[RMDB]
RNA sequence: GGGAACGACUCGAGUAGAGUCGAAAACGAUCAAGACACAGUGACCCCACUGCGACGUCGUCGCGUAUCCGCCCCUACGCAGUGGGCUGCUAUCGCGGCAUCCGUGGCUUUACUUGCAGGCGGCGGACAAUCUCAUAGAGUUCGCUCUAUGAGAUUGAAAAGAAACAACAACAACAAC
Reactivity to 2A3 in 0.01 (KOAc 150mM, MgCl2 10mM, bicine 150mM(pH8.5), 24C), signal-to-noise 7, nucleotides 027 to 126: c040g020a040u120c080a080a040g080a090c050a010c040a210g060u060g110a080c000c010c010c010a000c020u040g000c010g030a040c040g090u090c020g010u010c030g010c040g250u120a080u030c000c000g000c000c000c000c000u020a030c040g000c020a010g000u020g010g010g000c010u040g010c000u040a070u220c070g020c050g090g000c030a030u050c040c030g030u020g010g000c000u020u020u100a020c010u020u060g000c000a010g000g010c030g010g000c000g020g010a000
Reactivity to DMS in 0.01 (KOAc 150mM, MgCl2 10mM, bicine 150mM(pH8.5), 24C), signal-to-noise 9, nucleotides 027 to 126: c080g010a080u010c120a120a100g010a110c170a090c140a050g010u000g000a140c220c020c030c010a060c050u000g010c000g010a050c100g010u010c070g010u000c040g000c070g010u000a060u000c010c020g000c010c000c000c010u000a100c090g010c020a020g010u000g000g000g020c050u000g000c030u000a100u000c090g010c100g000g010c080a080u010c100c070g020u000g000g010c010u000u000u000a020c030u000u000g020c200a030g010g020c180g020g010c000g000g010a060

Structure probing data (2A3 and DMS) for a 177-nucleotide construct. The RNA was probed in 150 mM KOAc, 10 mM MgCl2 and 150 mM bicine (pH 8.5) at 24 C. The DMS profile rests on 23,606 reads. For 2A3 the reverse transcriptase was SuperScript II with manganese. For 2A3, 25,500 sequencing reads were counted. Values cover nucleotides 27 to 126.